[RMDB]
RNA sequence: GGGAACGACUCGAGUAGAGUCGAAAAGAUAUGGAUCUCUUCGAGAGAACGUGAGAUUGUCGAUGAAAGCUCUCGGAAACGAGAGCUGGAGACAAUCUCUCUCUAAGACAGAGAGAUCCUAAGUCAAAACCAUCAUCAGGUUCGCCUGAUGAUGGAAGUAUUAAGGAUUCUUCGGAAUCCUUAAUACAAAAGAAACAACAACAACAAC
Reactivity to 2A3 in 0.01 (KOAc 150mM, MgCl2 10mM, bicine 150mM(pH8.5), 24C), signal-to-noise 7, nucleotides 027 to 156: g030a010u070a020u110g000g000a000u000c000u000c010u090u100c050g050a040g020a010g040a150a140c270g130u160g030a010g000a000u000u000g000u000c030g240a300u030g020a020a000a010g000c010u000c000u000c000g010g040a100a090a030c010g000a010g000a000g010c000u000g000g000a020g000a000c000a010a000u000c000u000c000u000c000u000c000u020a150a060g050a030c070a090g040a000g000a000g000a020u000c000c000u010a120a010g030u020c030a000a010a070a160c010c000a000u000c000a000u000c000a000g000g060u030u090c170g140c050c000u000g000a000u000g000a000u000g000g000a000a020
Reactivity to DMS in 0.01 (KOAc 150mM, MgCl2 10mM, bicine 150mM(pH8.5), 24C), signal-to-noise 3, nucleotides 027 to 156: g000a150u000a220u010g030g010a000u010c000u000c010u000u000c010g010a200g010a050g000a050a040c110g040u020g020a020g010a030u000u000g020u000c000g000a200u010g010a170a130a130g000c000u000c000u010c000g010g000a170a130a270c010g030a000g020a000g040c000u000g000g000a130g010a020c000a010a010u010c010u000c000u000c000u000c000u000a140a190g010a220c300a040g000a020g010a020g010a000u000c010c010u010a010a090g010u010c040a040a120a150a190c000c010a000u000c000a010u000c000a020g020g000u000u010c300g000c030c000u000g000a010u000g010a000u000g010g010a000a040
Structure probing data (2A3 and DMS) for a 207-nucleotide construct. For DMS, 5,226 sequencing reads were counted. Values cover nucleotides 27 to 156. The data come from the RNA Mapping Database (RMDB), library RNAMAK.